About this RNA
Conditions: 150 mM KOAc, 10 mM MgCl2 and 150 mM bicine (pH 8.5), 24 C. This 177-nucleotide RNA was probed chemically with 2A3 and DMS. The 2A3 profile rests on 2,079 reads. 2A3 is a SHAPE reagent: it acylates the 2'-hydroxyl of flexible nucleotides of all four kinds. For DMS the reverse transcriptase was MarathonRT.
RNA sequence: GGGAACGACUCGAGUAGAGUCGAAAAGCUUCGAGGUGAUCGGUGAAGCCGGCUCGCCCGUCUGGCAUCAGCUGACGACGCGCGACUACCGUUCCGUCAUAGACUUCUACCGCCAGGUCUUCGGGUGGUUAUGACCCUACUUCGGUAGGGUCAUAACAAAAGAAACAACAACAACAAC
Reactivity to 2A3 in 0.01 (KOAc 150mM, MgCl2 10mM, bicine 150mM(pH8.5), 24C), signal-to-noise 2, nucleotides 027 to 126: g010c010u120u100c090g050a060g010g060u120g040a160u110c060g040g020u060g050a030a000g060c070c000g000g030c040u010c020g000c010c080c000g020u040c060u140g000g000c020a120u090c090a230g030c020u080g070a030c070g000a000c010g000c000g010c000g020a040c050u110a100c020c030g000u060u020c000c020g060u050c020a080u090a130g070a140c030u080u000c030u090a070c010c040g020c040c050a080g030g040u020c000u050u090c030g050g010g000u080g000
Reactivity to DMS in 0.01 (KOAc 150mM, MgCl2 10mM, bicine 150mM(pH8.5), 24C), signal-to-noise 3, nucleotides 027 to 126: g020c060u000u000c040g000a090g020g020u010g010a060u000c040g020g030u010g010a090a060g010c010c050g000g000c090u000c010g010c020c030c040g010u000c040u000g000g020c020a160u010c210a100g010c030u000g010a060c100g000a070c030g000c290g000c020g020a050c080u000a140c200c010g000u000u000c010c010g000u010c050a070u010a150g000a050c040u010u000c060u000a090c030c040g000c090c060a060g000g010u010c050u010u000c060g010g010g000u000g010